[RMDB]
RNA sequence: GGGAACGACUCGAGUAGAGUCGAAAAGACUUAGACUUCGGUCUAAGUCAAAAAAGAUAUGGACAAGGAUGUAGUGGCAACAGCGAUCUCGGAAACGAGAUCGACAUGCCAGCAUCUUGUCCUAAGUCAAAAACACCAUCCGUUCGCGGAUGGUGAAUGAUCGUCUUCUAUUCGUAGAAGACGAUCAAAAAGAAACAACAACAACAAC
Reactivity to 2A3 in 0.01 (KOAc 150mM, MgCl2 10mM, bicine 150mM(pH8.5), 24C), signal-to-noise 2, nucleotides 027 to 156: g000a000c000u000u000a000g000a000c000u010u020c300g030g000u000c000u000a000a000g000u000c000a000a040a000a000a000a000g070a040u110a040u080g000g000a000c030a030a070g260g060a050u050g040u100a150g300u030g040g000c030a060a060c010a220g040c010g000a000u000c020u000c010g000g030a060a080a060c010g000a000g010a000u000c000g000a030c000a010u030g010c000c000a000g000c000a000u000c000u000u000g010u000c000c000u000a040a010g050u020c030a040a060a040a030a030c000a000c060c000a010u050c000c000g030u050u090c300g000c010g080g000a010u000g000g060u000g000a000a020
Reactivity to DMS in 0.01 (KOAc 150mM, MgCl2 10mM, bicine 150mM(pH8.5), 24C), signal-to-noise 1, nucleotides 027 to 156: g000a050c000u000u000a010g020a040c000u000u040c300g100g040u010c010u000a010a030g090u010c000a030a010a080a110a110a080g060a070u000a300u010g000g000a060c000a060a060g010g040a040u010g040u020a010g000u010g050g060c000a060a040c000a210g090c010g020a020u000c020u000c000g100g040a050a100a300c000g020a000g010a000u040c000g050a070c040a300u000g020c040c000a090g030c000a000u000c000u000u010g010u010c010c000u000a000a120g020u050c090a040a090a030a160a210c060a010c030c000a010u000c000c010g020u000u010c300g000c050g000g000a000u020g020g030u000g020a000a050

This 207-nucleotide RNA was probed chemically with 2A3 and DMS.
2A3 adducts were read by reverse transcription with SuperScript II with manganese.
The 2A3 profile rests on 2,283 reads.
The reactions ran in a buffer of 150 mM KOAc, 10 mM MgCl2 and 150 mM bicine (pH 8.5), at 24 C.